This 177-nucleotide RNA was probed chemically with 2A3 and DMS. DMS adducts were read by reverse transcription with MarathonRT. Source: RMDB library TTRDES, as collected in RNAgym. For DMS, 1,666 sequencing reads were counted. For 2A3, 2,848 sequencing reads were counted.

RNA sequence: GGGAACGACUCGAGUAGAGUCGAAAAGAUAUGGAACUCAUAAGGCUGAUGACCUACGUCGGAAACGACGUAGCAAGGCCUAUGGAGUUCCUAAGUCAAAACUCCAAGGCCUUCGGGCCUUGGAGAACGACAUGAAGUUGUUCGCAACUUCAUGUCGAAAAGAAACAACAACAACAAC
Reactivity to 2A3 in 0.01 (KOAc 150mM, MgCl2 10mM, bicine 150mM(pH8.5), 24C), signal-to-noise 2, nucleotides 027 to 126: g010a010u090a050u170g020g000a010a000c010u010c000a010u040a240a260g000g060c030u090g060a300u080g020a150c000c010u010a000c000g010u020c000g000g000a030a040a050c030g010a000c000g010u000a000g000c000a040a250g020g000c000c000u040a010u080g020g040a010g000u000u040c000c000u010a050a010g070u000c010a000a030a140a240c020u000c020c000a000a000g010g020c010c100u300u300c300g180g020g000c000c000u030u010g000g000a000g010a010a000
Reactivity to DMS in 0.01 (KOAc 150mM, MgCl2 10mM, bicine 150mM(pH8.5), 24C), signal-to-noise 2, nucleotides 027 to 126: g010a030u000a300u000g000g010a000a020c000u010c000a030u000a220a110g040g020c000u000g020a040u010g000a140c300c010u000a000c000g020u000c000g000g000a120a080a180c000g020a020c000g000u000a010g000c010a060a080g000g020c010c000u000a000u000g040g000a020g000u000u000c000c000u000a020a070g030u000c040a140a130a150a180c000u000c000c000a010a000g010g020c000c000u000u040c220g020g010g020c000c000u000u010g000g010a000g000a000a050